[RMDB]
RNA sequence: GGGAACGACUCGAGUAGAGUCGAAAAUUUGUUACAAGUGUUGAGUCUAACAAACCGUUCAUCUCACCAGAGGUUUAUAUAAUCUUGGACCGUUUCCGGAAGGAAUGCCUUUCAGAGUCAAUAUCGUUUCAGCAUGGCGAUCCAGAAUUUGACUGGCAUAUUGUCAAACUUUCGAGUUUGACAAUAUAAAAGAAACAACAACAACAAC
Reactivity to 2A3 in 0.01 (KOAc 150mM, MgCl2 10mM, bicine 150mM(pH8.5), 24C), signal-to-noise 3, nucleotides 027 to 156: u030u010u020g020u030u050a070c050a140a040g040u010g010u170u090g080a050g030u050c050u050a050a030c030a030a060a030c030c020g040u060u110c040a100u070c090u010c060a040c030c040a070g020a040g160g040u060u180u010a070u020a010u040a040a110u000c030u030u080g030g000a040c000c030g010u020u080u050c020c030g030g040a000a020g050g020a070a030u060g020c000c000u000u050u040c070a030g010a000g080u020c010a020a050u040a030u140c010g010u040u080u080c070a080g050c030a040u120g030g000c010g000a000u020c050c040a050g050a060a060u010u050u050g020a000c010u010g030g000c000
Reactivity to DMS in 0.01 (KOAc 150mM, MgCl2 10mM, bicine 150mM(pH8.5), 24C), signal-to-noise 4, nucleotides 027 to 156: u000u000u000g010u000u010a050c040a170a130g010u000g020u000u010g010a130g010u000c050u010a030a050c030a030a020a080c030c060g010u000u010c050a120u000c040u000c030a100c040c040a180g010a100g020g010u000u000u010a050u010a090u000a080a050u010c020u000u000g010g020a090c060c020g010u000u000u000c010c020g010g000a140a120g020g010a080a040u000g010c020c020u000u000u000c030a040g010a030g000u000c020a030a150u000a060u000c030g050u010u000u010c050a170g010c170a170u000g010g020c030g000a030u000c050c040a300g010a040a070u000u000u000g010a050c020u000g030g030c110

Chemical mapping of a 207-nucleotide RNA with 2A3 and DMS. Conditions: 150 mM KOAc, 10 mM MgCl2 and 150 mM bicine (pH 8.5), 24 C. Source: RMDB library OK3TST, as collected in RNAgym. Values cover nucleotides 27 to 156.